[RMDB]
RNA sequence: GGGAACGACUCGAGUAGAGUCGAAAAUGUGGUGGGUGGUGCAUUCGCCUAUAUUCUGCGGAAUUUCGCCUGGCGUAUGGAUGAAGAGGAUUUUAUCCGAAUCCUUACGCGCCAGGUUGUCUGCGGAGAUCAAAGGACUCUUCGGAGUCCUUUGAUCAAAAGAAACAACAACAACAAC
Reactivity to DMS in 0.01 (KOAc 150mM, MgCl2 10mM, bicine 150mM(pH8.5), 24C), signal-to-noise 2, nucleotides 027 to 126: u010g040u020g010g020u000g000g010g030u000g000g020u010g020c110a060u010u000c060g000c030c080u030a030u010a080u030u000c000u010g000c020g020g020a030a110u010u000u060c150g010c000c000u010g010g000c000g000u010a100u010g000g010a060u020g000a110a130g010a280g000g000a060u000u050u000u060a060u020c040c040g020a290a060u000c000c000u010u020a040c130g010c010g020c030c000a000g000g030u000u020g040u010c020u000g010c000g030g010a070
Reactivity to 2A3 in 0.01 (KOAc 150mM, MgCl2 10mM, bicine 150mM(pH8.5), 24C), signal-to-noise 3, nucleotides 027 to 126: u130g020u090g020g030u040g040g010g000u060g070g060u070g020c000a050u080u050c020g030c010c010u080a100u030a040u190u020c020u030g000c000g040g020a040a060u030u160u270c090g000c000c000u000g010g000c010g000u030a060u140g010g090a050u030g090a060a100g030a100g110g020a040u060u100u160u300a100u060c000c000g020a020a010u000c000c000u060u110a050c130g000c000g000c010c000a010g000g010u010u020g000u000c000u010g010c000g000g010a040
Overview: The record gives the reactivity of an RNA of 177 nucleotides to DMS and 2A3. For DMS the reverse transcriptase was MarathonRT. DMS (dimethyl sulfate) methylates the pairing face of unpaired adenines and cytosines. 2A3 adducts were read by reverse transcription with SuperScript II with manganese.